[RMDB]
RNA sequence: GGGAACGACUCGAGUAGAGUCGAAAAGAUAUGGAUCUUAGCAAGGCUGACUGUUCGGAAACGAACAGCAGCUGAUGACCUAAGAGUCCUAAGUCAAAAGUUCUUCCGCCUUCGGGCGGAAGAACAAGAUUAGAAUUACGUUCGCGUAAUUCUAAUCAAAAGAAACAACAACAACAAC
Reactivity to DMS in 0.01 (KOAc 150mM, MgCl2 10mM, bicine 150mM(pH8.5), 24C), signal-to-noise 5, nucleotides 027 to 126: g010a020u010a280u010g000g000a280u000c000u000u000a000g000c020a050a090g010g020c010u000g010a140c000u010g010u000u000c010g000g010a070a060a140c000g010a000a000c010a000g000c010a010g010c000u000g010a020u010g000a180c300c000u000a000a000g010a040g010u010c000c000u010a050a120g000u010c030a100a070a140a170g000u000u000c000u000u000c000c000g020c000c000u000u000c250g030g010g040c000g010g010a000a000g000a010a000c000a030a050
Reactivity to 2A3 in 0.01 (KOAc 150mM, MgCl2 10mM, bicine 150mM(pH8.5), 24C), signal-to-noise 4, nucleotides 027 to 126: g030a010u050a030u120g010g000a000u000c010u010u020a020g020c060a230a300g150g000c020u010g130a300c010u000g030u000u000c000g010g040a060a050a040c000g000a000a000c000a000g020c000a000g000c020u020g000a000u010g010a000c020c000u000a000a010g020a010g300u050c000c000u000a080a010g040u020c040a040a050a060a130g000u000u010c000u000u010c010c000g030c030c020u040u090c290g100g020g010c000g020g000a010a000g000a000a000c000a000a000